[RMDB]
RNA sequence: GGGAACGACUCGAGUAGAGUCGAAAAUAAGUCUCUGUUUUCCAAAACAACCUGUGAGCAAAUAAAAACAGAGGCUGGCAGCAGGCAGGCAAAGAAUCUUGACGCUGCAACAAUGAGGACAGUCCAGCCAUCUUGCUCUCUGACCAGAGGAAAACUAAUAUUACUAUAGUUUCGACUAUAGUAAUAUAAAAGAAACAACAACAACAAC
Reactivity to 2A3 in 0.01 (KOAc 150mM, MgCl2 10mM, bicine 150mM(pH8.5), 24C), signal-to-noise 3, nucleotides 027 to 156: u120a080a000g060u020c010u000c010u090g010u010u000u000u040c010c000a050a110a100a150c070a080a170c030c040u100g020u050g030a010g000c010a000a100a050u200a090a160a070a030a020c050a050g050a010g060g000c000u000g000g020c020a020g000c010a000g090g000c000a000g020g000c050a070a150a070g060a090a140u070c020u050u040g040a080c050g010c150u060g010c010a030a020c050a060a150u180g050a070g050g050a030c020a040g020u050c020c000a020g010c000c000a060u020c040u000u020g000c010u000c000u010c050u060g060a140c010c080a030g040a080g040g010a000a040a000a000c010u040a050
Reactivity to DMS in 0.01 (KOAc 150mM, MgCl2 10mM, bicine 150mM(pH8.5), 24C), signal-to-noise 2, nucleotides 027 to 156: u000a060a120g010u010c000u040c020u000g000u010u000u010u000c000c040a070a140a150a150c080a040a100c100c000u010g050u000g000a160g050c030a030a080a240u000a050a060a080a070a060c120a040g000a080g040g010c030u000g040g040c000a300g050c010a060g000g000c030a060g000g040c070a080a060a090g000a170a100u000c070u000u010g020a100c050g030c030u000g000c030a060a060c020a030a100u010g010a130g050g000a130c060a080g010u010c050c030a100g000c020c020a050u000c040u000u000g010c010u000c010u000c070u000g000a120c040c030a070g000a190g000g010a010a050a050a060c030u000a050